[RMDB]
RNA sequence: GGGAACGACUCGAGUAGAGUCGAAAAGGCGACCCGUGUAGGCUAGCUGGCUCUUCCCCAUCGUCGAGGAGGUCUGUGGCCAGGACUUGUAGCGCGGAGCUACCGCACGCCAGUGAGUUCGAGAAGCACAUGGUGAGGUCUUCGGACCUCACCAUGUAAAAGAAACAACAACAACAAC
Reactivity to DMS in 0.01 (KOAc 150mM, MgCl2 10mM, bicine 150mM(pH8.5), 24C), signal-to-noise 1, nucleotides 027 to 126: g010g000c040g000a140c220c020c010g000u020g040u010a080g020g030c020u000a110g000c020u040g020g000c050u000c110u020u000c000c050c010c020a130u000c090g070u000c050g000a090g000g000a080g000g000u030c080u000g030u010g070g020c060c120a170g000g000a080c080u000u090g030u000a060g020c040g050c060g020g020a210g030c060u000a050c030c000g000c050a020c120g050c010c000a080g000u010g010a040g000u000u000c040g000a130g000a080a140g000c100

An RNA of 177 nucleotides, treated with DMS and read out base by base. The reactions ran in a buffer of 150 mM KOAc, 10 mM MgCl2 and 150 mM bicine (pH 8.5), at 24 C. High DMS reactivity at an A or C suggests that its Watson-Crick edge is free. Values cover nucleotides 27 to 126. It was measured as part of the RMDB library OK2TST. The DMS profile rests on 835 reads.